[RMDB]
RNA sequence: GGGAACGACUCGAGUAGAGUCGAAAAGAAAGAAAGAAAGAGGCCAGUGUUGAGAGGCGGAGACUUGGGCAAUUGCUGGACGCUGCCCUGGGCAUUGCACUUGUCUCGGCUGAGACGCGCCCGCCAAGCGGUCUGUCCUGUUCGCAGGACAGACCGCAAAAGAAACAACAACAACAAC
Reactivity to 2A3 in 0.01 (KOAc 150mM, MgCl2 10mM, bicine 150mM(pH8.5), 24C), signal-to-noise 1, nucleotides 027 to 126: g090a040a010a010g050a010a000a090g110a000a050a000g200a000g000g000c040c020a050g000u050g010u060u040g100a160g000a150g040g000c140g130g000a080g000a000c000u000u000g000g000g070c040a000a240u120u150g000c050u040g110g040a050c070g020c170u190g000c000c030c000u000g050g000g020c000a000u000u000g000c000a000c000u000u030g000u000c000u040c000g020g020c050u020g000a000g000a010c000g000c000g070c000c000c000g000c010c000a000a000